Conditions: 150 mM KOAc, 10 mM MgCl2 and 150 mM bicine (pH 8.5), 24 C. Structure probing data (2A3 and DMS) for a 207-nucleotide construct. DMS adducts were read by reverse transcription with MarathonRT. For 2A3, 1,305 sequencing reads were counted. Values cover nucleotides 27 to 156. Source: RMDB library OK3TST, as collected in RNAgym.
[RMDB]
RNA sequence: GGGAACGACUCGAGUAGAGUCGAAAACGUUCCACGGCAGGUGCCGUUGGGUAUGACCUUUUUAGUAUCGACAACUACGUCGUACUGCCUGGCCGCCGCGUUGUCGUCUCGACGGGCAUCACGAUCAAUCUCCCGCCAGGAACUUAUGGAAAUAUACCAUCCCUGGAACUUUCGAGUUCCAGGGAUGAAAAGAAACAACAACAACAAC
Reactivity to 2A3 in 0.01 (KOAc 150mM, MgCl2 10mM, bicine 150mM(pH8.5), 24C), signal-to-noise 3, nucleotides 027 to 156: c010g040u060u000c010c010a060c010g020g000c070a120g130g060u190g190c030c020g000u040u050g030g000g030u160a120u050g110a170c010c030u120u120u000u030u160a090g000u030a040u300c040g000a020c010a080a080c150u250a110c040g000u020c000g000u000a030c010u050g030c020c030u020g030g000c040c020g010c020c000g080c040g030u040u040g000u000c020g000u000c020u030c080g030a050c000g020g050g000c010a040u080c030a010c100g070a050u210c020a060a130u050c040u040c060c000c000g000c000c010a030g000g040a020a020c020u050u050a080u160g030g100a010a150a010u300a040u170a110c050
Reactivity to DMS in 0.01 (KOAc 150mM, MgCl2 10mM, bicine 150mM(pH8.5), 24C), signal-to-noise 1, nucleotides 027 to 156: c070g000u000u020c020c070a080c030g030g020c040a110g000g020u000g000c000c060g010u000u010g020g000g050u010a070u000g000a030c020c060u010u010u000u000u010a060g000u000a110u000c030g040a100c000a180a080c120u000a110c060g000u000c060g000u000a040c010u000g020c060c000u010g020g010c000c020g000c070c000g010c100g020u000u000g010u000c050g010u000c010u000c010g040a060c000g010g000g000c050a060u000c060a070c060g020a080u000c070a130a100u020c080u000c050c030c010g020c020c070a160g020g010a040a100c070u010u000a090u000g020g010a070a060a110u000a150u000a150c080